[RMDB]
RNA sequence: GGGAACGACUCGAGUAGAGUCGAAAACGGGCUACGAGGGAUUGCUUAAGAACUAAGGUUAAGCAGUAAUAUAGCCAUAGACGACCCUCGUUAUAAGGACAGAGAUCCUUAUGACAUAUAUCGUCAAGGUACACGGAGAUUUCGAUCUUUGUGUACCAAAAGAAACAACAACAACAAC
Reactivity to DMS in 0.01 (KOAc 150mM, MgCl2 10mM, bicine 150mM(pH8.5), 24C), signal-to-noise 9, nucleotides 027 to 126: c130g010g010g010c010u000a020c140g010a100g010g000g000a070u010u010g010c000u000u000a010a020g020a120a140c300u070a130a130g020g010u000u000a000a010g000c000a010g010u010a040a050u010a140u010a020g010c000c020a080u040a090g000a010c010g010a030c020c010c020u030c140g000u000u000a000u000a000a000g000g000a020c030a270g020a190g010a150u000c000c000u000u000a000u000g000a000c020a090u020a060u020a110u000c010g010u000c000a160a100
Reactivity to 2A3 in 0.01 (KOAc 150mM, MgCl2 10mM, bicine 150mM(pH8.5), 24C), signal-to-noise 9, nucleotides 027 to 126: c040g020g010g000c020u050a030c100g060a070g040g080g040a040u020u030g000c000u020u010a030a030g070a190a140c130u140a170a070g230g030u020u000a000a000g000c010a000g020u040a030a100u130a030u090a070g010c000c010a030u100a030g010a000c010g010a020c010c000c000u010c000g000u000u000a000u000a000a000g000g000a000c050a050g280a070g030a300u000c000c000u000u000a010u010g000a000c010a010u080a000u010a020u090c010g010u010c030a040a060
Annotation
The record gives the reactivity of an RNA of 177 nucleotides to DMS and 2A3. The reactions ran in a buffer of 150 mM KOAc, 10 mM MgCl2 and 150 mM bicine (pH 8.5), at 24 C. For DMS, 43,223 sequencing reads were counted. Source: RMDB library OK1LIB, as collected in RNAgym.